This 177-nucleotide RNA was probed chemically with DMS and 2A3.
The RNA was probed in 150 mM KOAc, 10 mM MgCl2 and 150 mM bicine (pH 8.5) at 24 C.
Source: RMDB library OK2TRN, as collected in RNAgym.
Values are in units of 0.01, from 0 to 300, in steps of 10.
For DMS, 2,362 sequencing reads were counted.
Values cover nucleotides 27 to 126.
As a SHAPE reagent, 2A3 marks flexible, mostly unpaired nucleotides at the ribose 2'-OH.
2A3 adducts were read by reverse transcription with SuperScript II with manganese.
[RMDB]
RNA sequence: GGGAACGACUCGAGUAGAGUCGAAAACGAUCCGGCCGAUCCGAGGUACGAUCCCUACCUCUCAUGGUUGCCUUCGAUGUUCGAAGGGAGGGUGGGUGGAGAGGUCGUCUCCCUCCUCUACGUGCCGAACUUGUUGUGACUUCGGUCACAACAAGUUAAAAGAAACAACAACAACAAC
Reactivity to DMS in 0.01 (KOAc 150mM, MgCl2 10mM, bicine 150mM(pH8.5), 24C), signal-to-noise 3, nucleotides 027 to 126: c140g020a050u010c080c050g010g010c040c030g000a120u010c140c180g000a030g030g000u000a010c070g020a120u000c010c020c020u010a070c000c000u000c020u010c080a070u010g010g020u000u010g010c040c000u000u000c030g010a110u000g020u010u020c050g000a050a030g000g050g010a070g010g010g020u010g000g010g010u010g020g020a090g020a300g010g020u010c020g020u010c080u000c130c010c000u000c020c030u000c060u010a110c100g020u010g010c020c040g000
Reactivity to 2A3 in 0.01 (KOAc 150mM, MgCl2 10mM, bicine 150mM(pH8.5), 24C), signal-to-noise 3, nucleotides 027 to 126: c050g030a050u000c050c060g000g060c030c010g060a030u060c040c020g030a000g080g040u080a020c030g050a040u050c020c000c000u110a290c030c000u010c000u000c020a060u110g150g140u030u030g170c000c000u040u020c030g080a150u270g120u210u100c020g030a060a010g020g080g060a260g120g030g090u150g020g000g030u170g040g030a090g000a040g040g030u030c010g020u050c060u030c040c010c000u040c050c000u080c010u060a060c000g090u180g040c020c010g010